RNA sequence: GGGAACGACUCGAGUAGAGUCGAAAAGUACGUAUUCCUCGACGGUGGAGAUGGUACUGUACUGGCGCUCCAGCAGAUAGUAGGACAUGGUCAACAGCACCUGGCCUUCGGUGUGCCCGAAAACGCUGAUGAACCAUGACGGGGAAGUGGGACAGAGACACAUGUUUAGAUUCGUCUAAACAUGUGUAAAAGAAACAACAACAACAAC
Reactivity to DMS in 0.01 (KOAc 150mM, MgCl2 10mM, bicine 150mM(pH8.5), 24C), signal-to-noise 3, nucleotides 027 to 156: g010u010a020c080g010u000a050u000u000c020c010u000c020g030a100c080g020g040u000g010g030a110g010a080u020g020g010u000a050c020u010g030u000a030c020u000g030g010c080g010c080u030c010c030a090g030c060a140g010a150u000a080g040u010a080g030g020a140c000a060u000g010g000u000c000a120a100c030a070g010c000a070c070c040u010g020g000c010c050u020u010c050g020g010u000g040u010g000c040c010c040g010a040a040a050a090c050g010c010u010g000a100u000g010a120a030c020c030a030u000g010a090c030g000g000g020g020a060a130g010u000g000g010g000a100c070a110g010a250g010
Reactivity to 2A3 in 0.01 (KOAc 150mM, MgCl2 10mM, bicine 150mM(pH8.5), 24C), signal-to-noise 5, nucleotides 027 to 156: g040u040a010c030g040u060a100u090u070c030c020u040c030g110a120c040g050g070u080g040g030a060g000a080u090g030g040u080a080c060u090g030u070a050c020u050g060g000c070g010c030u040c020c010a020g010c020a010g060a170u120a050g090u070a040g030g070a010c010a010u040g000g010u010c030a050a030c010a090g000c010a040c060c030u020g020g010c020c000u060u090c070g150g170u100g070u180g080c020c000c000g040a060a050a020a010c080g000c010u010g000a060u030g010a040a010c010c000a000u030g030a040c030g000g000g000g010a050a040g020u080g030g020g010a030c030a090g070a030g050